This 177-nucleotide RNA was probed chemically with 2A3 and DMS. The reactions ran in a buffer of 150 mM KOAc, 10 mM MgCl2 and 150 mM bicine (pH 8.5), at 24 C. 2A3 adducts were read by reverse transcription with SuperScript II with manganese. The 2A3 profile rests on 756 reads. The DMS profile rests on 595 reads.
RNA sequence: GGGAACGACUCGAGUAGAGUCGAAAAAAGCGUUAGCCCAGAUCGACAGCGAAACACUGGGACACCACAUGAUCUUGCAGUGUAGUUGUUCGACCCGGCUGACGCGGAUCACGCGUAUCCUAAGCGCUCAGUAGGCGGAUUUCGAUCCGCCUACUGAAAAAGAAACAACAACAACAAC
Reactivity to 2A3 in 0.01 (KOAc 150mM, MgCl2 10mM, bicine 150mM(pH8.5), 24C), signal-to-noise 1, nucleotides 027 to 126: a000a010g010c000g000u020u020a010g010c000c000c000a010g000a190u010c000g010a000c010a000g020c030g110a280a010a000c010a000c000u000g000g030g030a010c000a030c070c100a090c050a190u230g070a300u040c000u050u300g230c010a030g010u000g000u060a070g010u010u000g030u120u030c010g030a050c000c050c020g070g000c020u030g000a010c030g000c000g020g030a030u110c030a050c090g060c000g020u080a030u110c000c000u030a100a100g030c010g010c050
Reactivity to DMS in 0.01 (KOAc 150mM, MgCl2 10mM, bicine 150mM(pH8.5), 24C), signal-to-noise 1, nucleotides 027 to 126: a030a020g000c000g010u030u000a020g000c040c030c160a170g000a010u010c010g030a040c070a030g000c010g040a110a150a100c000a000c010u000g000g010g000a020c000a120c190c250a110c170a300u000g010a100u000c020u000u000g020c000a030g030u000g040u010a110g020u030u000g000u000u000c000g000a020c000c100c300g000g010c020u000g030a020c030g020c000g000g010a090u000c090a080c130g020c010g010u000a050u000c010c030u000a040a130g030c010g000c120